[RMDB]
RNA sequence: GGGAACGACUCGAGUAGAGUCGAAAAGUUCCCUCUUGGCGUGGAGGUUUAACUACGCUCGUUCCCCAUAUCGGUGUGGGCGCACCGGAUUUAUAAAUCAAAGUCCUUUAGGGAACGGAAAGGAACAAAAAUCCAUGGGAGUUCGCUCCCAUGGAAACGCAAUAAGAUGGUUCGCCAUCUUAUUGCGAAAAGAAACAACAACAACAAC
Reactivity to DMS in 0.01 (KOAc 150mM, MgCl2 10mM, bicine 150mM(pH8.5), 24C), signal-to-noise 2, nucleotides 027 to 156: g040u000u000c000c000c030u000c010u000u010g000g000c010g130u000g020g010a100g010g000u000u010u000a050a110c000u000a030c000g050c000u000c000g010u000u000c020c000c000c090a220u000a040u000c020g010g020u010g020u000g000g000g030c070g030c030a030c010c020g010g000a240u030u000u000a070u000a030a070a090u000c050a070a110a060g040u000c000c000u000u010u000a070g020g010g000a040a090c040g000g010a050a080a070g010g010a090a110c090a020a020a080a150a160u010c000c000a010u000g000g010g000a040g040u000u000c300g030c000u000c000c000c010a000u010g010g000a000a030a040
Reactivity to 2A3 in 0.01 (KOAc 150mM, MgCl2 10mM, bicine 150mM(pH8.5), 24C), signal-to-noise 1, nucleotides 027 to 156: g010u020u020c000c000c010u000c000u000u030g010g020c000g000u030g000g030a030g020g070u170u100u140a080a020c010u000a000c000g010c000u000c000g000u000u030c000c000c010c030a070u160a160u110c000g000g000u000g000u000g010g040g000c000g030c000a000c000c000g010g000a020u020u300u010a150u150a110a020a010u090c150a020a000a000g030u000c000c000u000u040u090a010g000g000g000a010a000c040g010g000a090a160a000g110g000a010a000c010a070a060a110a010a130u040c000c000a000u000g000g010g000a030g010u130u160c160g100c020u000c000c030c000a020u000g000g000a000a000a000